[RMDB]
RNA sequence: GGGAACGACUCGAGUAGAGUCGAAAAAAGGAAUAAAUUCCAUUAAGAAAAGGUAAAAAGAAAAAUCUAUUCACUGAACUUACUGAUAGGAUUUGCAAAUGUGUCAAGUGCAUCAAGGAGAAGAUAGCUUCUCAACAUAGUUCGCUAUGUUGAGAAGAAAAGAAACAACAACAACAAC
Reactivity to DMS in 0.01 (KOAc 150mM, MgCl2 10mM, bicine 150mM(pH8.5), 24C), signal-to-noise 4, nucleotides 027 to 126: a120a090g010g020a090a070u020a050a070a140u000u000c010c000a130u050u020a080a120g010a090a040a070a140g000g000u010a050a090a050a100a070g000a040a060a070a050a070u000c020u000a040u010u000c030a060c060u020g020a080a100c060u010u010a030c090u000g000a040u010a090g010g000a030u010u000u000g010c150a050a060a060u040g000u000g000u030c050a020a030g020u020g010c020a020u010c060a040a070g000g000a020g000a080a040g000a060u020a070g010
Reactivity to 2A3 in 0.01 (KOAc 150mM, MgCl2 10mM, bicine 150mM(pH8.5), 24C), signal-to-noise 5, nucleotides 027 to 126: a000a020g070g010a100a030u170a060a050a010u130u000c000c000a030u050u140a090a040g080a100a130a020a010g030g030u160a050a060a080a050a020g110a070a160a040a010a010u010c040u050a050u070u080c040a030c070u060g030a070a010c020u050u110a040c010u090g020a040u050a110g090g000a030u020u020u050g020c020a030a080a140u230g090u020g020u120c010a010a040g040u030g110c010a020u030c050a110a050g030g020a030g010a030a000g010a050u050a040g040